[RMDB]
RNA sequence: GGGAACGACUCGAGUAGAGUCGAAAAGUUGUGAAUAGGUAAGCCUAUAUCUGUUCGCACUACAGGCACUAUGUCGCAUCAUGGUCCCUGUGAACUCGAAGCUUGAUGCGACAAGUUUUGAGUGAUCUCAGACACUAUAGGCUUAGUUCUUGAGAGCGAGGCUGCAUAAUUUCGAUUAUGCAGCCUCAAAAGAAACAACAACAACAAC
Reactivity to DMS in 0.01 (KOAc 150mM, MgCl2 10mM, bicine 150mM(pH8.5), 24C), signal-to-noise 1, nucleotides 027 to 156: g050u010u030g070u020g000a090a170u000a000g050g020u000a070a070g000c000c010u010a110u000a020u020c000u000g000u000u000c030g030c060a080c050u000a100c010a140g020g030c120a070c040u000a030u000g030u000c160g010c160a150u000c010a050u000g020g020u000c070c000c020u000g050u000g010a290a020c000u000c000g060a020a040g040c020u010u000g000a100u000g030c240g000a090c010a010a030g000u000u000u000u000g000a060g040u020g000a090u000c030u000c030a060g020a110c090a020c070u000a100u000a060g000g010c000u000u000a040g010u020u010c030u000u020g000a110g030a140g010c230
Reactivity to 2A3 in 0.01 (KOAc 150mM, MgCl2 10mM, bicine 150mM(pH8.5), 24C), signal-to-noise 3, nucleotides 027 to 156: g030u010u010g000u010g020a100a040u070a160g080g000u030a000a000g000c000c000u010a000u000a010u040c030u000g030u030u060c060g070c010a010c000u200a120c010a030g040g050c070a010c010u090a080u220g020u050c040g040c090a030u030c000a000u080g040g040u090c070c000c040u090g050u100g080a090a030c020u010c100g030a050a030g020c020u010u000g030a030u070g060c040g050a020c020a010a010g000u000u030u060u060g030a030g010u000g070a120u020c050u000c050a010g010a030c040a010c090u010a000u000a000g000g000c000u020u000a010g010u100u040c000u040u100g080a140g000a030g090c060

The record gives the reactivity of an RNA of 207 nucleotides to DMS and 2A3. DMS adducts were read by reverse transcription with MarathonRT. Reactivities are rounded to 0.1 and cut off at 0 and 3. For DMS, 1,767 sequencing reads were counted. For 2A3 the reverse transcriptase was SuperScript II with manganese. The data come from the RNA Mapping Database (RMDB), library OK3TST.